[RMDB]
This 177-nucleotide RNA was probed chemically with 2A3 and DMS. For DMS the reverse transcriptase was MarathonRT. It was measured as part of the RMDB library OK1LIB. For 2A3, 46,555 sequencing reads were counted.
RNA sequence: GGGAACGACUCGAGUAGAGUCGAAAACCCCAAGCAGACACGUCCAUCUCGACGGUCGCUGGCUAUUCGACACGGUUGAAUAACGGCAGGAGCGGCGGCGGGGAGUUGAGGGAUUGGCCCUGUAGGGGGUGGUCGGCGGGUUCGCCUGCCGACUACCAAAAGAAACAACAACAACAAC
Reactivity to 2A3 in 0.01 (KOAc 150mM, MgCl2 10mM, bicine 150mM(pH8.5), 24C), signal-to-noise 9, nucleotides 027 to 126: c010c000c000c010a030a050g030c030a020g050a050c080a030c240g020u000c030c020a180u070c050u040c070g100a070c030g050g020u030c010g000c020u010g070g010c010u040a060u060u080c020g060a030c100a100c220g200g010u050u070g050a100a050u130a170a040c030g060g000c040a050g030g080a060g030c030g020g000c010g020g000c030g020g030g020g030a110g030u060u090g040a060g020g030g010a040u040u080g040g010c000c020c000u030g020u060a080g030g050g020
Reactivity to DMS in 0.01 (KOAc 150mM, MgCl2 10mM, bicine 150mM(pH8.5), 24C), signal-to-noise 8, nucleotides 027 to 126: c050c010c010c110a150a080g010c050a070g010a050c050a080c060g010u010c020c080a090u020c090u010c170g010a070c040g010g010u000c030g000c020u000g000g020c080u010a060u000u010c030g000a040c040a150c140g020g010u000u010g020a060a050u020a090a100c050g010g020c030a080g010g020a080g000c080g000g000c080g000g010c050g010g000g000g000a100g000u000u010g000a080g010g000g000a110u010u010g000g010c050c030c010u010g000u010a110g010g020g010